[RMDB]
RNA sequence: GGGAACGACUCGAGUAGAGUCGAAAAGCAACAAAGUGUUCAAGGUGCUGUGUGGCUUCUUUGGGCUGCUUACAGUAUAAUGACAAAAGAGAGAAACAAUUUGAAGACAGAAUUUAGGCCUGGUGUGGUCGGUGGCUCACGCCUGUAAUCCCAGCACCCUAUUGCCUAAAUUCGUUUAGGCAAUAGGAAAAGAAACAACAACAACAAC
Reactivity to 2A3 in 0.01 (KOAc 150mM, MgCl2 10mM, bicine 150mM(pH8.5), 24C), signal-to-noise 4, nucleotides 027 to 156: g060c010a000a060c020a040a130a030g070u060g010u090u090c060a060a020g080g010u020g020c010u010g000u010g020u040g020g030c000u050u050c070u150u170u160g050g040g000c020u000g000c010u100u080a010c010a000g040u040a060u060a130a150u130g080a010c050a020a080a020a000g100a030g000a010g030a040a120a020c060a090a070u140u150u230g050a090a030g060a010c040a020g070a080a040u050u110u110a130g010g010c000c020u020g010g010u100g000u020g020g020u070c030g020g020u050g010g000c020u030c030a020c040g010c000c000u020g030u050a020a020u020c000c010c000a000g060c010a040c030
Reactivity to DMS in 0.01 (KOAc 150mM, MgCl2 10mM, bicine 150mM(pH8.5), 24C), signal-to-noise 2, nucleotides 027 to 156: g020c030a070a150c070a080a030a150g010u000g020u000u010c040a100a150g020g020u010g050c050u010g000u010g020u010g010g040c040u000u000c090u010u000u020g000g040g040c000u060g010c030u020u010a070c070a080g020u010a080u010a080a060u000g000a150c070a020a080a110a110g000a100g020a070g050a120a090a120c080a060a130u010u020u000g000a050a100g000a180c080a100g000a040a090u010u010u010a060g020g030c030c040u010g040g000u000g030u020g000g010u000c040g060g000u000g020g000c110u020c040a040c060g000c030c000u030g000u000a030a100u000c010c000c000a080g030c030a050c060